[RMDB]
RNA sequence: GGGAACGACUCGAGUAGAGUCGAAAAUCAUUAAUACUUAGUAUGCUAAGUUUUAUGGGCUUACAAGUUUUAAAUGUUAUUCAAAAAAAUGUCAUAUUAUUAUCACUAUUAGAUAGCGAAGAAUUUAGACACAGUAAUAGUUCGCUAUUACUGUGUCAAAAGAAACAACAACAACAAC
Reactivity to 2A3 in 0.01 (KOAc 150mM, MgCl2 10mM, bicine 150mM(pH8.5), 24C), signal-to-noise 1, nucleotides 027 to 126: u060c040a000u000u060a000a000u000a020c010u000u000a050g000u050a000u020g020c000u040a080a080g000u000u050u160u040a080u180g130g010g000c030u030u030a010c000a000a010g000u000u010u090u140a040a050a000u000g030u090u060a070u100u120c040a020a020a040a120a000a040a120u100g060u010c040a070u190a060u300u130a010u100u120a000u120c000a000c020u040a040u100u060a060g060a160u100a040g010c000g000a040a050g000a080a040u030u160u130a070
Reactivity to DMS in 0.01 (KOAc 150mM, MgCl2 10mM, bicine 150mM(pH8.5), 24C), signal-to-noise 1, nucleotides 027 to 126: u010c010a060u010u010a030a030u000a000c000u000u000a210g050u000a020u010g000c010u000a060a130g000u000u000u020u020a190u020g030g020g050c000u000u000a000c000a030a020g000u000u000u000u000a040a010a130u000g010u000u000a090u020u030c030a000a000a030a140a100a080a070u020g000u010c030a080u000a170u010u000a060u000u000a060u010c010a050c020u000a080u000u000a140g000a200u010a000g020c020g030a030a100g020a070a110u000u000u020a120
Structure probing data (2A3 and DMS) for a 177-nucleotide construct. For DMS the reverse transcriptase was MarathonRT. For 2A3 the reverse transcriptase was SuperScript II with manganese. The reactions ran in a buffer of 150 mM KOAc, 10 mM MgCl2 and 150 mM bicine (pH 8.5), at 24 C. For 2A3, 853 sequencing reads were counted.